[RMDB]
RNA sequence: GGGAACGACUCGAGUAGAGUCGAAAAGAUAUGGACCAUGAUGAUGUCACAGUGAUGACCAUACGUAACAUCAUCUCGGAAACGAGAUGUGGUAUGCAAGCUGAAGUCAUCAUCAUGGUCCUAAGUCCUCGGUUUAUAGGUUCGCCUAUAAACCGAGAAAAGAAACAACAACAACAAC
Reactivity to 2A3 in 0.01 (KOAc 150mM, MgCl2 10mM, bicine 150mM(pH8.5), 24C), signal-to-noise 3, nucleotides 027 to 126: g130a040u150a100u250g030g010a020c020c000a010u000g030a000u000g010a000u010g010u020c010a000c020a100g060u040g180a300u200g010a050c070c000a010u000a020c030g180u210a070a240c060a300u300c000a020u010c030u000c000g020g060a110a100a050c000g010a000g000a000u010g010u000g000g000u000a000u020g010c040a010a300g000c000u020g020a270a060g090u040c000a020u000c000a010u000c000a000u000g000g000u000c000c010u010a000a000g000u000c010
Reactivity to DMS in 0.01 (KOAc 150mM, MgCl2 10mM, bicine 150mM(pH8.5), 24C), signal-to-noise 3, nucleotides 027 to 126: g000a060u000a300u010g010g010a010c000c000a000u010g010a000u000g010a040u000g000u030c010a300c000a000g000u000g000a100u000g000a290c300c010a000u000a000c000g000u030a070a190c290a080u040c000a000u000c000u000c000g000g000a120a120a160c010g000a010g000a010u000g030u000g000g000u000a020u000g000c110a040a160g040c000u010g010a140a230g010u000c000a000u000c000a000u020c000a000u000g000g000u000c000c000u000a010a080g010u010c040

The record gives the reactivity of an RNA of 177 nucleotides to 2A3 and DMS.
It was measured as part of the RMDB library TTRINS.
For 2A3 the reverse transcriptase was SuperScript II with manganese.
DMS (dimethyl sulfate) methylates the pairing face of unpaired adenines and cytosines.
The RNA was probed in 150 mM KOAc, 10 mM MgCl2 and 150 mM bicine (pH 8.5) at 24 C.